[RMDB]
RNA sequence: GGGAACGACUCGAGUAGAGUCGAAAAGAGACUGCUGGCUGACCGGCUCCGCGAGGAAGAGGCUGCCCUCGGCUGCCCAGCCCGGACCCUGCGGGUGCUCUCUGCCCCCCACCUGCCCCCCUCCUCCCCUAUUUUGCAAGUUCGCUUGCAAAAUAGGAAAAGAAACAACAACAACAAC
Reactivity to DMS in 0.01 (KOAc 150mM, MgCl2 10mM, bicine 150mM(pH8.5), 24C), signal-to-noise 1, nucleotides 027 to 126: g000a040g000a090c040u000g010c040u000g000g020c040u010g040a110c090c040g000g010c070u000c030c020g010c180g000a150g010g010a100a120g000a160g010g010c020u010g000c050c030c110u010c160g010g010c000u010g010c010c000c030a130g020c090c030c040g010g010a150c090c060c040u000g010c000g010g000g000u000g000c120u010c030u000c030u000g010c080c000c010c000c010c000a070c040c020u000g000c010c000c000c010c010c000u000c010c010u010c040c020
This 177-nucleotide RNA was probed chemically with DMS.
It was measured as part of the RMDB library OK2TRN.
The RNA was probed in 150 mM KOAc, 10 mM MgCl2 and 150 mM bicine (pH 8.5) at 24 C.